[RMDB]
RNA sequence: GGGAACGACUCGAGUAGAGUCGAAAAUCCAUAAUCUGAAUUAACAUAACUAUCCACAACCUAUUCAUCAGCCUCAUUACUAUAUCUUACCCAAUUAAAUGAUAAUUCAUCUAACUUCUCACUAACUUUCUCCUCUGACCCACUAACAUCACCCCUAACUCCCUAUAUUAUUCGUAAUAUAGGGAGUAAAAGAAACAACAACAACAAC
Reactivity to DMS in 0.01 (KOAc 150mM, MgCl2 10mM, bicine 150mM(pH8.5), 24C), signal-to-noise 3, nucleotides 027 to 156: u010c010c020a140u000a060a140u010c050u010g000a120a080u000u000a070a080c040a140u000a060a080c040u000a060u000c040c030a130c060a070a050c030c020u000a090u000u000c060a060u000c020a040g010c030c010u000c050a070u000u010a090c060u000a080u000a060u000c050u000u000a090c020c020c020a080a150u000u000a040a060a050u000g000a060u000a050a110u010u010c030a030u000c020u010a040a060c030u000u000c030u000c020a070c060u000a040a070c020u000u000u000c020u010c030c000u010c010u000g010a190c030c000c030a060c090u000a060a050c040a080u010c030a150c000c010c020c020u000a100
Reactivity to 2A3 in 0.01 (KOAc 150mM, MgCl2 10mM, bicine 150mM(pH8.5), 24C), signal-to-noise 6, nucleotides 027 to 156: u000c020c000a060u130a060a080u060c060u040g100a070a070u150u080a150a030c030a070u130a080a030c020u030a060u100c040c030a030c030a090a050c010c010u040a050u050u040c030a050u020c010a030g040c010c020u040c030a040u090u090a050c050u070a050u060a050u210c040u030u070a070c010c010c010a060a080u120u110a100a110a070u100g020a030u040a120a070u100u060c020a010u030c030u040a050a090c020u060u050c030u020c040a030c010u040a100a000c010u060u060u020c040u010c020c000u010c050u040g040a060c000c010c000a050c040u020a040a020c020a030u100c020a060c030c000c030c030u040a010
Record summary: Source: RMDB library OK3TST, as collected in RNAgym. This 207-nucleotide RNA was probed chemically with DMS and 2A3. The reactions ran in a buffer of 150 mM KOAc, 10 mM MgCl2 and 150 mM bicine (pH 8.5), at 24 C. 2A3 adducts were read by reverse transcription with SuperScript II with manganese.